The data come from the RNA Mapping Database (RMDB), library OK1LIB. Chemical mapping of a 177-nucleotide RNA with 2A3 and DMS. Conditions: 150 mM KOAc, 10 mM MgCl2 and 150 mM bicine (pH 8.5), 24 C.
RNA sequence: GGGAACGACUCGAGUAGAGUCGAAAAGAAACACAGACGACACAAGAGCAUCGACGCCUGUGAAAACGGAGCAGACAUUACUCCGUAAAAUUAAGUAACAAAAUCCAAACCUUGGGGUACAAGAAAACCAGGAUGAUUUAUUCGUAAAUCAUCCUGGAAAAGAAACAACAACAACAAC
Reactivity to 2A3 in 0.01 (KOAc 150mM, MgCl2 10mM, bicine 150mM(pH8.5), 24C), signal-to-noise 6, nucleotides 027 to 126: g040a000a050a000c020a000c020a030g030a030c020g030a000c000a000c030a190a090g020a020g090c030a080u100c050g040a020c040g020c010c010u010g000u010g010a080a110a000a000c000g000g010a000g000c050a050g120a130c040a050u100u210a040c010u000c010c010g000u030a040a020a000a000u210u120a080a040g080u040a060a030c060a030a070a030a070u020c040c000a040a030a090c050c030u030u050g030g000g000g020u080a050c040a040a040g080a090a090a000a000
Reactivity to DMS in 0.01 (KOAc 150mM, MgCl2 10mM, bicine 150mM(pH8.5), 24C), signal-to-noise 3, nucleotides 027 to 126: g000a130a080a110c030a010c030a040g000a040c030g050a110c090a060c110a130a150g000a140g000c040a030u000c020g010a100c050g010c020c000u000g000u000g010a050a070a150a010c000g000g000a000g040c150a050g010a090c190a100u030u000a190c010u000c000c000g000u000a020a020a150a090u050u010a060a070g000u030a050a060c120a080a080a120a030u040c060c040a020a030a060c050c040u000u000g000g000g050g000u000a030c080a070a080g000a120a040a130a070